[RMDB]
RNA sequence: GGGAACGACUCGAGUAGAGUCGAAAAUACUCACAUUUCGAUGUGAGUAACUGUCUAGUCGCUAGCGCCGAUCAAGCCCUAGCGACUAGACUUUAUUGAUCGCCAGCUAACCUUUCGAGGUUAGCAAUACGUCGUACAAGUUCGCUUGUACGACGUAAAAAGAAACAACAACAACAAC
Reactivity to DMS in 0.01 (KOAc 150mM, MgCl2 10mM, bicine 150mM(pH8.5), 24C), signal-to-noise 3, nucleotides 027 to 126: u000a020c000u000c000a000c000a010u000u010u020c170g020a040u010g000u000g020a010g010u000a010a030c070u010g010u010c010u000a000g000u000c010g000c000u000a010g000c300g000c010c060g000a130u030c300a080a120g000c000c040c000u000a000g000c000g020a000c000u000a010g000a020c000u000u000u000a070u020u010g000a120u000c090g010c020c040a200g000c000u000a000a010c000c000u010u000u000c120g020a010g000g000u000u000a000g010c000a060a030

Background: The record gives the reactivity of an RNA of 177 nucleotides to DMS. The reactions ran in a buffer of 150 mM KOAc, 10 mM MgCl2 and 150 mM bicine (pH 8.5), at 24 C. The DMS profile rests on 2,293 reads.